[RMDB]
The record gives the reactivity of an RNA of 177 nucleotides to DMS. For DMS the reverse transcriptase was MarathonRT. The RNA was probed in 150 mM KOAc, 10 mM MgCl2 and 150 mM bicine (pH 8.5) at 24 C.
RNA sequence: GGGAACGACUCGAGUAGAGUCGAAAAAUUUAAGUAUAGUUAGAGCUAUAUGGUGCCUGAUAAACUGGCCUACCACAUCUGAGUAAAAGAAAGCUGGGACCUAGUUCUUCCAUGCCAGCCGACAAGCAAUCUUACCAUGGUUCGCCAUGGUAAGAUUAAAAGAAACAACAACAACAAC
Reactivity to DMS in 0.01 (KOAc 150mM, MgCl2 10mM, bicine 150mM(pH8.5), 24C), signal-to-noise 2, nucleotides 027 to 126: a110u020u010u000a080a140g010u000a000u000a050g020u010u010a130g030a220g000c010u010a020u020a040u020g010g030u000g000c020c020u010g020a110u000a040a120a090c120u000g000g030c050c070u000a140c020c010a030c100a100u030c050u010g000a080g000u000a090a140a110a090g010a030a150a120g000c090u020g000g020g020a080c080c070u010a040g000u000u000c050u000u000c050c040a030u000g010c010c030a030g020c000c030g000a090c120a040a060g030c150
It was measured as part of the RMDB library OK2TRN.